[RMDB]
An RNA of 177 nucleotides, treated with 2A3 and read out base by base. It was measured as part of the RMDB library RFM100. As a SHAPE reagent, 2A3 marks flexible, mostly unpaired nucleotides at the ribose 2'-OH. The 2A3 profile rests on 416 reads. The RNA was probed in 150 mM KOAc, 10 mM MgCl2 and 150 mM bicine (pH 8.5) at 24 C. Reactivities are given for positions 27 through 126.
RNA sequence: GGGAACGACUCGAGUAGAGUCGAAAAAGGAUCCUAAUAAACCUGCGAGUGAGACGUUAAAAAAACUUCCACUGGCAAAACGCAGGCCAACAGUAACACUCCAGAGACAGAUUAGAAGUAAAGUAUAGGAUAAUCGACCAUUCGUGGUCGAUUAUCCAAAAGAAACAACAACAACAAC
Reactivity to 2A3 in 0.01 (KOAc 150mM, MgCl2 10mM, bicine 150mM(pH8.5), 24C), signal-to-noise 1, nucleotides 027 to 126: a000g000g010a030u000c030c000u000a010a000u000a030a190a000c000c000u010g090c100g010a000g030u000g040a300g000a150c080g000u000u000a300a160a000a000a000a000a000c000u000u030c000c000a000c000u010g070g040c000a040a040a040a040c040g000c000a000g010g000c000c010a080a100c050a100g100u060a190a000c000a020c110u040c000c000a110g000a000g000a040c000a000g160a100u150u020a040g010a040a010g010u280a000a000a000g200u110a190u140a100